[RMDB]
RNA sequence: GGGAACGACUCGAGUAGAGUCGAAAAAGCGGAUGCCGCGCGCGCCGCUUACCGCACGUACGGCAAGGGAAGGCAUCGUGCGGGGCUCAACUACGGCGACUGCUUCUCAUACGGCCUCGCCAAGAUCGCCGUCUAAGUGCUUCGGCACUUAGACGGCAAAAGAAACAACAACAACAAC
Reactivity to 2A3 in 0.01 (KOAc 150mM, MgCl2 10mM, bicine 150mM(pH8.5), 24C), signal-to-noise 3, nucleotides 027 to 126: a000g020c010g020g020a120u150g020c070c030g290c110g000c010g050c010g000c110c000g000c010u010u040a070c000c000g000c040a020c030g080u220a040c180g090g000c080a110a080g130g080g010a050a100g180g000c030a050u050c030g000u010g000c000g000g000g030g000c030u020c090a080a050c090u090a020c040g000g000c000g010a050c070u050g020c000u140u010c050u050c080a090u180a080c050g030g010c000c020u020c000g000c000c000a040a070g070a160u090c150